The record gives the reactivity of an RNA of 177 nucleotides to 2A3 and DMS. 2A3 adducts were read by reverse transcription with SuperScript II with manganese. The reactions ran in a buffer of 150 mM KOAc, 10 mM MgCl2 and 150 mM bicine (pH 8.5), at 24 C. It was measured as part of the RMDB library OK1LIB.

RNA sequence: GGGAACGACUCGAGUAGAGUCGAAAAUUGACGGAGCUGCCCUUGCUGUGAGUAAUUGCCUCGCCCAGUGCCACAAAUGCUCCGGUUAGUGGUGCCCAAAAUAAGUGACGCCAAGUCGAGGGUGGUGCGACGGUAUACCGUUCGCGGUAUACCGUCGAAAAGAAACAACAACAACAAC
Reactivity to 2A3 in 0.01 (KOAc 150mM, MgCl2 10mM, bicine 150mM(pH8.5), 24C), signal-to-noise 2, nucleotides 027 to 126: u070u110g040a030c020g020g000a020g000c030u010g000c020c000c000u030u080g010c050u040g010u060g080a070g030u090a100a240u050u050g030c010c020u040c000g010c020c010c000a040g010u040g050c000c010a020c020a040a080a030u180g010c010u000c000c010g000g010u020u070a100g010u020g100g000u060g000c000c000c030a080a100a040a110u210a100a010g040u050g090a010c030g050c080c050a130a020g040u050c080g050a070g000g020g000u040g000g050u090g020
Reactivity to DMS in 0.01 (KOAc 150mM, MgCl2 10mM, bicine 150mM(pH8.5), 24C), signal-to-noise 2, nucleotides 027 to 126: u060u000g020a020c020g030g000a060g020c040u000g040c030c020c000u010u000g010c080u000g040u030g020a090g000u020a040a090u030u030g030c040c010u010c040g010c020c030c000a050g020u000g000c010c050a050c040a090a050a040u030g020c000u000c010c000g010g020u010u060a080g040u000g010g040u020g000c000c020c010a020a010a110a060u050a120a090g000u020g010a040c020g020c030c030a040a040g020u000c020g010a070g000g020g010u000g010g000u010g010